[RMDB]
RNA sequence: GGGAACGACUCGAGUAGAGUCGAAAAACAUUUCAAUUCACGAUCUUUGGGGAAGUUGUAGAGAUAAUUUCGCAUCGCGGUAAGCAAUGAGGACUCAAACAACAUAUUACUAUAUUGACCGAGCUUAUCUACAUCACCACGAACGAUGAAUCCAUACUCACUCUUGUAGCUUCGGCUACAAGAGUGAAAAAGAAACAACAACAACAAC
Reactivity to 2A3 in 0.01 (KOAc 150mM, MgCl2 10mM, bicine 150mM(pH8.5), 24C), signal-to-noise 2, nucleotides 027 to 156: a000c030a040u120u090u060c080a080a040u040u000c050a020c080g020a090u020c060u120u110u090g010g000g000g010a020a120g010u060u080g020u050a010g020a000g000a130u030a150a130u090u130u120c060g010c060a080u080c060g020c030g040g020u060a040a040g050c050a030a010u090g000a030g060g040a040c020u080c200a060a080a060c030a060a000c040a050u190a040u120u090a080c120u040a010u050a070u170u090g000a000c000c030g010a000g050c010u030u060a040u030c000u010a030c010a050u000c040a010c030c010a050c110g040a030a010c030g060a070u000g020a000a030u010c080c040a030u060a060c010
Conditions: 150 mM KOAc, 10 mM MgCl2 and 150 mM bicine (pH 8.5), 24 C. Structure probing data (2A3) for a 207-nucleotide construct. 2A3 adducts were read by reverse transcription with SuperScript II with manganese. It was measured as part of the RMDB library OK3TST.